Structure probing data (2A3 and DMS) for a 207-nucleotide construct. 2A3 adducts were read by reverse transcription with SuperScript II with manganese. For DMS the reverse transcriptase was MarathonRT. The RNA was probed in 150 mM KOAc, 10 mM MgCl2 and 150 mM bicine (pH 8.5) at 24 C.
RNA sequence: GGGAACGACUCGAGUAGAGUCGAAAACAAUAUUCCAGAAGAUACAUCCAAAAGCAUCGAGGAGGCUUAUCUCGACCCUUCGGUUCCCUUUGGUCACGAAAGGGUUCUGUUUGCGAUGUUGGCUCUGAGAGAUUCACCGGAAGAAUAUCCAUGGAGGUAGACCUCAUGUAUUCGUACAUGAGGUCUAAAAAGAAACAACAACAACAAC
Reactivity to 2A3 in 0.01 (KOAc 150mM, MgCl2 10mM, bicine 150mM(pH8.5), 24C), signal-to-noise 2, nucleotides 027 to 156: c030a020a080u080a100u180u100c020c000a000g020a060a000g040a030u070a050c020a040u070c090c020a030a200a050a010g040c000a040u090c040g020a000g010g020a030g130g020c080u180u160a060u130c050u040c060g050a080c000c010c000u010u020c020g040g020u040u110c020c020c000u020u000u130g040g030u150c050a010c140g050a040a070a060g000g000g000u030u020c010u000g130u060u060u040g000c060g020a050u070g020u050u020g020g000c000u000c020u050g090a110g000a020g000a060u070u070c030a020c040c020g020g010a040a020g020a080a130u090a020u090c020c010a040u070g050g020a000g000g060
Reactivity to DMS in 0.01 (KOAc 150mM, MgCl2 10mM, bicine 150mM(pH8.5), 24C), signal-to-noise 2, nucleotides 027 to 156: c070a110a120u020a140u010u000c020c000a120g020a110a130g000a150u000a070c020a150u020c060c050a080a110a140a080g000c080a050u000c030g030a150g000g000a130g020g000c030u000u000a060u000c050u000c010g020a030c020c010c020u000u000c020g020g000u030u000c000c000c050u000u000u010g010g030u000c160a080c060g030a050a070a010g030g050g000u000u020c060u000g020u000u000u000g020c090g000a070u000g020u000u000g010g000c000u000c010u000g000a200g000a170g010a100u000u000c010a240c040c120g070g010a140a180g000a060a110u000a070u010c030c010a100u000g020g000a050g010g000